[RMDB]
RNA sequence: GGGAACGACUCGAGUAGAGUCGAAAAGGGUUGCAGUCCUUACCGGUAGAUAGGAUCUUCUCUGGAGAGUAAUGCCCAGGCUGCUUCCCUGAUAAUUGCGCUGUGUUUCCGUAUGAAAUACAGGCAAACCUACCGUCCCAUUCGUGGGACGGUAGGUAAAAGAAACAACAACAACAAC
Reactivity to 2A3 in 0.01 (KOAc 150mM, MgCl2 10mM, bicine 150mM(pH8.5), 24C), signal-to-noise 4, nucleotides 027 to 126: g000g000g010u020u020g000c000a000g040u200c020c000u030u060a120c030c060g000g030u050a050g030a210u100a050g170g100a140u030c020u090u020c110u040c120u160g080g010a050g000a000g070u090a060a030u070g000c000c010c010a000g020g020c010u000g000c000u000u000c000c000c000u010g010a010u030a090a050u030u030g010c300g000c000u000g000u000g050u010u000u000c080c150g110u130a090u300g010a010a000a000u010a000c000a000g000g010c000a000a000
Reactivity to DMS in 0.01 (KOAc 150mM, MgCl2 10mM, bicine 150mM(pH8.5), 24C), signal-to-noise 2, nucleotides 027 to 126: g020g000g010u000u070g010c000a000g000u030c000c050u000u030a100c210c270g020g020u010a010g010a100u020a070g000g000a300u000c010u000u010c080u030c190u070g000g010a120g010a100g010u010a080a090u000g010c000c010c210a080g000g030c000u000g000c020u000u000c000c000c010u000g010a100u010a030a080u000u000g000c030g030c000u000g000u000g040u000u000u000c000c300g040u020a080u060g010a010a020a000u000a000c000a000g020g000c000a000a010
Description
An RNA of 177 nucleotides, treated with 2A3 and DMS and read out base by base. Values cover nucleotides 27 to 126. DMS adducts were read by reverse transcription with MarathonRT.